[RMDB]
RNA sequence: GGGAACGACUCGAGUAGAGUCGAAAAGCGCAGGAUAUUCACGGGGCAGCGUCAAGGACGGGACUGGCCGCCCCAGCUCCUGGCGACCAUACCGCGUCCCUUGAGAAAAACAGUAACCUGGCAGAGGUCUCUAUGGGAGAUUCGUCUCCCAUAGAGAAAAAGAAACAACAACAACAAC
Reactivity to 2A3 in 0.01 (KOAc 150mM, MgCl2 10mM, bicine 150mM(pH8.5), 24C), signal-to-noise 3, nucleotides 027 to 126: g040c060g000c020a000g000g020a070u050a070u180u100c050a040c080g040g000g000g000c020a060g010c040g030u030c050a060a070g030g020a040c020g020g000g020a040c020u010g000g010c010c040g020c010c020c000c000a010g000c020u010c000c010u020g020g000c030g020a010c020c000a010u080a090c020c020g060c030g050u030c030c000c000u050u050g040a050g050a060a130a030a020a000c040a020g030u040a040a060c010c010u000g000g000c010a040g060a050g080g060
Reactivity to DMS in 0.01 (KOAc 150mM, MgCl2 10mM, bicine 150mM(pH8.5), 24C), signal-to-noise 3, nucleotides 027 to 126: g000c020g020c010a000g010g000a090u030a050u050u030c120a110c100g000g000g000g010c030a070g010c080g020u020c030a050a090g060g000a070c030g010g000g010a080c130u020g010g010c060c050g000c090c020c030c000a060g000c090u010c030c000u020g000g000c050g010a080c040c010a070u000a120c130c000g000c050g030u000c010c010c000u000u010g000a070g010a100a060a160a100a090c150a150g010u020a080a040c030c010u010g000g020c020a150g000a130g000g000